[RMDB]
RNA sequence: GGGAACGACUCGAGUAGAGUCGAAAAGUGCAGAUUGAAAUUCAUGGGAGCCUCUCCAUAAUGGAUGAACGCCGCGUUAGUACGCGCAGUCGCGACGUAAACGCUCUGUGUUCCCGUUCAGGCCUCACCACGGCUAGUGAUUCGUCACUAGCCGUGGAAAAGAAACAACAACAACAAC
Reactivity to DMS in 0.01 (KOAc 150mM, MgCl2 10mM, bicine 150mM(pH8.5), 24C), signal-to-noise 1, nucleotides 027 to 126: g000u000g020c010a030g020a100u000u000g010a120a090a040u020u000c060a050u000g010g000g000a020g000c130c080u010c080u010c020c000a090u010a120a080u010g000g040a050u000g000a080a050c110g030c020c060g010c000g010u010u010a120g010u000a010c080g000c060g020c040a090g040u010c090g020c010g010a040c010g000u010a040a040a080c050g000c010u000c010u000g010u000g000u000u000c000c000c010g010u000u000c090a050g000g020c060c100u030c050a180
Reactivity to 2A3 in 0.01 (KOAc 150mM, MgCl2 10mM, bicine 150mM(pH8.5), 24C), signal-to-noise 1, nucleotides 027 to 126: g100u070g030c000a000g020a130u100u040g090a080a070a110u160u010c020a020u040g000g000g060a080g090c020c000u150c010u050c070c000a020u170a140a070u060g000g030a010u060g040a120a000c020g020c060c010g000c030g000u040u000a040g120u000a060c010g040c020g020c050a020g230u180c120g000c000g060a230c040g010u010a000a010a010c030g030c000u010c070u020g020u000g000u030u030c000c000c010g000u040u030c070a010g000g090c030c000u020c010a070
An RNA of 177 nucleotides, treated with DMS and 2A3 and read out base by base. The data come from the RNA Mapping Database (RMDB), library OK2TRN. The DMS profile rests on 1,118 reads.